[RMDB]
RNA sequence: GGGAACGACUCGAGUAGAGUCGAAAACGCUGGGCCACAUCCCGAGCCGCGAAGAACGUCUGAAGCGCGCACGGACGGGAGCGGCUCGAACUGUGGCCUGUGCUGAAGCGCGCACGGCAACCGAAAGGUGCGAAAGAUGUUAGUUCGCUAACAUCAACUAUGACUUGGGGUUCGCCCCAAGUCAUAGAAAAGAAACAACAACAACAAC
Reactivity to 2A3 in 0.01 (KOAc 150mM, MgCl2 10mM, bicine 150mM(pH8.5), 24C), signal-to-noise 2, nucleotides 027 to 156: c040g000c010u020g000g000g000c040c000a020c010a060u090c050c060c010g000a000g000c000c010g040c040g110a240a000g000a020a000c000g000u030c010u030g070a270a050g000c010g000c000g010c000a020c000g010g000a000c000g020g020g010a020g010c030g030g000c010u000c000g000a020a010c140u080g010u000g030g010c000c000u000g000u000g000c000u020g000a100a040g020c010g000c000g000c000a000c000g020g040c010a020a000c020c000g040a020a040a040g000g020u010g020c020g040a150a080a040g010a010u000g000u020u000a010g010u040u040c230g020c130u000a000a010c000a000u000c010a000a020